[RMDB]
RNA sequence: GGGAACGACUCGAGUAGAGUCGAAAACGCUUAGUCGGGAUUUCGCUUCAUACCCUGUACUUCCACCACUUAAGGCUCACAACAGUGCCGACAGUCAACGCAACCGUCCUUAAGGGAGCCGAGGGGAGAUCCAUCCUGCAUUCGUGCAGGAUGGAUCAAAAGAAACAACAACAACAAC
Reactivity to 2A3 in 0.01 (KOAc 150mM, MgCl2 10mM, bicine 150mM(pH8.5), 24C), signal-to-noise 3, nucleotides 027 to 126: c080g030c030u150u140a030g050u110c010g000g000g050a080u040u120u110c060g000c030u070u030c030a060u080a190c010c000c000u060g050u040a060c030u080u000c010c020a080c010c000a090c080u080u060a060a050g060g000c010u040c030a090c010a150a090c060a160g040u050g060c000c000g020a040c000a000g060u140c020a090a060c090g000c030a070a030c000c020g030u060c000c000u060u030a040a010g060g000g010a010g030c060c010g020a030g000g010g030g030a080
Reactivity to DMS in 0.01 (KOAc 150mM, MgCl2 10mM, bicine 150mM(pH8.5), 24C), signal-to-noise 1, nucleotides 027 to 126: c110g000c070u000u020a070g030u020c090g020g000g030a070u000u030u000c060g010c090u000u000c000a080u030a240c090c010c000u000g000u000a030c040u000u010c130c050a030c000c040a080c130u000u020a050a180g000g000c040u010c080a000c130a020a040c270a020g020u000g000c000c020g000a050c040a090g010u000c000a030a110c070g000c060a150a260c080c130g000u000c000c000u000u010a070a180g000g000g110a120g030c020c020g000a100g000g000g000g000a090
Chemical mapping of a 177-nucleotide RNA with 2A3 and DMS.
The 2A3 profile rests on 1,306 reads.
As a SHAPE reagent, 2A3 marks flexible, mostly unpaired nucleotides at the ribose 2'-OH.
For 2A3 the reverse transcriptase was SuperScript II with manganese.